RNA sequence: GGGAACGACUCGAGUAGAGUCGAAAAGAUAUGGAUCGUGUCGCUCUUGGAUUUAGGGGAUACAGCAAACAUGUCGGAAACGACAUGGUAGCUGUAUCCCCUUGUCAGAGCGUCACGAUCCUAAGUCCUGUAUUCACAUCUUCGGAUGUGAAUACAGAAAAGAAACAACAACAACAAC
Reactivity to DMS in 0.01 (KOAc 150mM, MgCl2 10mM, bicine 150mM(pH8.5), 24C), signal-to-noise 2, nucleotides 027 to 126: g000a110u000a300u000g000g000a010u000c000g030u000g020u000c000g010c000u000c000u000u000g040g000a020u010u000u000a010g040g010g010g010a010u000a010c020a000g040c000a050a190a300c010a000u000g000u000c000g010g000a220a130a270c000g000a010c000a010u000g010g000u000a250g000c010u000g010u000a000u000c010c000c000c000u010u010g000u000c020a040g000a010g010c010g000u000c010a010c000g000a000u010c000c000u010a010a120g000u000c040